An RNA of 177 nucleotides, treated with DMS and 2A3 and read out base by base. Source: RMDB library OK1LIB, as collected in RNAgym. The RNA was probed in 150 mM KOAc, 10 mM MgCl2 and 150 mM bicine (pH 8.5) at 24 C. 2A3 adducts were read by reverse transcription with SuperScript II with manganese. The 2A3 profile rests on 12,677 reads. As a SHAPE reagent, 2A3 marks flexible, mostly unpaired nucleotides at the ribose 2'-OH.
RNA sequence: GGGAACGACUCGAGUAGAGUCGAAAAGGAGUCUACUGAACAUCAAGCUUGCUAUGAGCAGGAUCUUAGAGCUGAGGAAUUGGCCUCCCAAUCCGAACAGGUGUUAUAAUCCUUUCUUAAUAGGCGGCCGUGGUCCAGAGUUCGCUCUGGACUACGGAAAAGAAACAACAACAACAAC
Reactivity to DMS in 0.01 (KOAc 150mM, MgCl2 10mM, bicine 150mM(pH8.5), 24C), signal-to-noise 6, nucleotides 027 to 126: g010g000a070g010u000c060u020a130c120u020g010a110a050c070a080u010c050a060a090g000c010u010u000g020c090u020a080u000g000a090g030c130a080g010g000a050u020c050u020u010a100g030a070g000c030u000g000a090g000g040a110a100u020u030g010g010c040c030u000c030c020c070a080a040u000c040c030g010a070a100c210a070g000g010u000g000u000u020a080u020a090a090u010c030c010u000u010u000c040u010u010a050a070u030a070g020g000c090g020g000
Reactivity to 2A3 in 0.01 (KOAc 150mM, MgCl2 10mM, bicine 150mM(pH8.5), 24C), signal-to-noise 9, nucleotides 027 to 126: g060g010a050g040u050c050u090a100c070u120g060a100a040c030a090u070c060a080a020g020c010u050u100g020c010u100a060u300g060a050g040c040a040g030g050a060u060c030u050u140a060g010a020g040c050u050g030a030g020g070a150a110u070u080g030g000c000c000u030c030c010c000a010a040u030c020c010g010a060a020c040a080g000g040u030g060u140u110a130u090a100a080u030c000c000u030u050u040c020u030u130a180a150u070a110g080g020c010g030g010